Structure probing data (DMS) for a 177-nucleotide construct.

RNA sequence: GGGAACGACUCGAGUAGAGUCGAAAAGGUUUUACAGGAACAACAUGCUCCGAAAAUGAAGUUUUAAAGGCUUCUGGGUUGUAUGGCAGAUUUGUAGCCUCGUGUGGCUUCACCCCAGAUGUGAAGGCUUCACCCGUAGUUUCGACUACGGGUGAAGAAAAGAAACAACAACAACAAC
Reactivity to DMS in 0.01 (KOAc 150mM, MgCl2 10mM, bicine 150mM(pH8.5), 24C), signal-to-noise 1, nucleotides 027 to 126: g000g020u010u010u000u020a030c040a080g000g020a100a040c100a140a160c030a000u000g010c010u000c020c020g020a110a110a060a060u000g000a030a040g000u010u000u000u030a070a110a180g000g010c010u000u020c000u000g020g000g030u020u000g000u000a020u000g000g010c140a120g010a130u000u000u010g000u000a050g000c010c010u000c130g020u000g000u000g010g000c020u000u010c050a020c040c030c060c090a170g000a090u000g020u000g000a070a070g020g000